[RMDB]
RNA sequence: GGGAACGACUCGAGUAGAGUCGAAAAGAUAUGGAGUUGUGGGAGAUGGUGGGUCGGAAACGACCCAUUUCAUCGAGGAUCACACUCCUAAGUCAAAGUGGGCAUUUAGUUCGCUAAAUGCCCACAACAAUAUCCGUGACUUCGGUCACGGAUAUUGAAAAGAAACAACAACAACAAC
Reactivity to 2A3 in 0.01 (KOAc 150mM, MgCl2 10mM, bicine 150mM(pH8.5), 24C), signal-to-noise 2, nucleotides 027 to 126: g050a050u100a030u130g010g010a040g040u300u180g010u150g000g030g010a050g000a030u080g030g010u030g000g010g020u000c000g000g050a030a020a040c010g020a000c000c040c020a000u020u070u100c000a000u000c000g000a090g000g000a010u030c000a000c000a000c010u000c000c000u020a150a030g070u040c070a220a060a040g010u000g000g010g000c000a000u000u000u040a040g000u050u050c260g020c210u000a000a010a000u020g000c010c000c010a010c000a000a000
Reactivity to DMS in 0.01 (KOAc 150mM, MgCl2 10mM, bicine 150mM(pH8.5), 24C), signal-to-noise 2, nucleotides 027 to 126: g030a020u000a300u010g040g000a030g020u020u010g030u000g000g000g010a050g000a010u000g020g050u000g010g000g020u000c000g010g000a090a060a140c010g000a010c000c000c000a000u000u010u010c010a000u000c000g000a080g020g000a040u010c010a020c000a010c000u000c010c010u000a000a100g000u010c020a100a110a110g020u000g000g000g000c000a030u000u000u000a010g000u000u020c230g020c000u000a000a000a000u000g010c000c000c000a000c000a010a070